[RMDB]
RNA sequence: GGGAACGACUCGAGUAGAGUCGAAAAGGUCUGCAUGUGUUUAUUAUUCUCAAGUCUUGUGUAAAUCAAUUCUUUUGGUUGACUCAAGUUUGGUUACUUCUGUUGGUGAUUCUAGUGAAAUCGCCACCAUGAUUCCAUUCUUCGGAAUGGAAUCAUGAAAAGAAACAACAACAACAAC
Reactivity to DMS in 0.01 (KOAc 150mM, MgCl2 10mM, bicine 150mM(pH8.5), 24C), signal-to-noise 2, nucleotides 027 to 126: g010g010u010c030u000g020c050a050u010g010u010g000u000u010u000a060u010u000a120u010u010c040u000c030a090a120g010u020c030u010u000g000u010g000u000a020a030a020u010c020a020a030u010u020c220u000u000u000u000g020g020u000u000g010a040c030u010c010a020a040g010u000u000u010g010g000u000u010a060c120u000u000c050u000g020u000u000g030g020u000g010a010u000u000c020u000a150g010u010g010a090a020a010u000c010g020c000c010a030c160
Reactivity to 2A3 in 0.01 (KOAc 150mM, MgCl2 10mM, bicine 150mM(pH8.5), 24C), signal-to-noise 1, nucleotides 027 to 126: g050g000u040c020u050g000c050a070u080g020u000g040u120u060u030a050u020u000a080u150u000c070u020c030a010a040g100u000c000u050u030g010u010g030u030a030a000a020u010c000a010a030u110u200c100u120u150u050u010g010g020u020u030g000a020c020u010c010a000a000g000u060u050u050g050g000u030u040a090c040u070u060c040u090g160u150u020g000g000u010g010a000u050u000c020u030a100g110u050g210a080a000a000u020c030g020c030c000a010c010